[RMDB]
RNA sequence: GGGAACGACUCGAGUAGAGUCGAAAACGUCGUUAGAAACAGUUAGUGGUAGUAACAGCAAUAUCAGCAAUACGAAAAAUCACUUGAGCGAGGAACACGGUCAACAACAUUUUCAAUACGAUGACGAAUGUAUAGAAGUAGUAAUUAUAGAAAACAAUCUGUACUAGGACUUCGGUCCUAGUACAGAAAAAGAAACAACAACAACAAC
Reactivity to 2A3 in 0.01 (KOAc 150mM, MgCl2 10mM, bicine 150mM(pH8.5), 24C), signal-to-noise 1, nucleotides 027 to 156: c010g030u010c010g000u000u060a030g120a100a100a000c020a070g050u030u060a020g000u000g080g000u000a010g000u000a110a060c020a020g100c010a040a050u030a130u120c030a000g000c050a060a000u010a160c040g160a090a000a000a000a000u100c010a030c040u010u010g030a020g160c030g050a010g020g060a030a000c060a000c140g000g060u080c040a000a040c000a000a030c000a080u000u000u130u050c080a070a020u090a080c010g010a000u040g030a000c040g030a010a030u050g040u010a100u020a110g060a010a010g110u030a000g000u050a030a030u100u120a200u150a040g070a040a100a000a010c020a070a040